[RMDB]
RNA sequence: GGGAACGACUCGAGUAGAGUCGAAAAGCCGGGCAGAGGCUGCAAUCUCGGCACUUUGGGAGGCUAAGGCAGGCAGCUGGGAGGUGGAGGUUGUAGCGAGCCGAGAUCACGCCACUGCACUCCAGCCUGAUACGACACAGUUCGCUGUGUCGUAUCAAAAAGAAACAACAACAACAAC
Reactivity to DMS in 0.01 (KOAc 150mM, MgCl2 10mM, bicine 150mM(pH8.5), 24C), signal-to-noise 2, nucleotides 027 to 126: g030c020c030g000g010g090c060a080g000a070g040g020c010u000g020c300a100a030u000c010u000c000g010g030c000a130c080u000u000u010g030g010g020a110g020g000c100u010a070a100g000g000c150a060g020g020c130a070g040c090u040g060g000g010a070g000g000u020g000g010a100g020g010u020u000g010u000a040g010c080g010a110g010c000c030g030a030g000a030u000c040a200c150g000c010c010a050c000u000g010c020a020c030u000c020c020a050g020c070c070
Reactivity to 2A3 in 0.01 (KOAc 150mM, MgCl2 10mM, bicine 150mM(pH8.5), 24C), signal-to-noise 1, nucleotides 027 to 126: g090c040c060g050g040g000c040a020g050a060g030g060c010u000g060c070a040a040u000c000u000c000g010g000c030a060c110u150u190u130g070g000g020a070g000g090c050u080a080a050g080g020c020a020g100g000c060a050g010c050u110g000g020g120a100g030g000u110g030g080a050g020g100u090u070g080u130a060g060c010g040a000g060c020c020g030a030g000a020u080c020a000c060g000c010c010a040c010u010g000c000a010c090u050c010c000a030g040c030c010
Source: RMDB library OK2TRN, as collected in RNAgym. Structure probing data (DMS and 2A3) for a 177-nucleotide construct. The reactions ran in a buffer of 150 mM KOAc, 10 mM MgCl2 and 150 mM bicine (pH 8.5), at 24 C. For DMS the reverse transcriptase was MarathonRT. For 2A3 the reverse transcriptase was SuperScript II with manganese.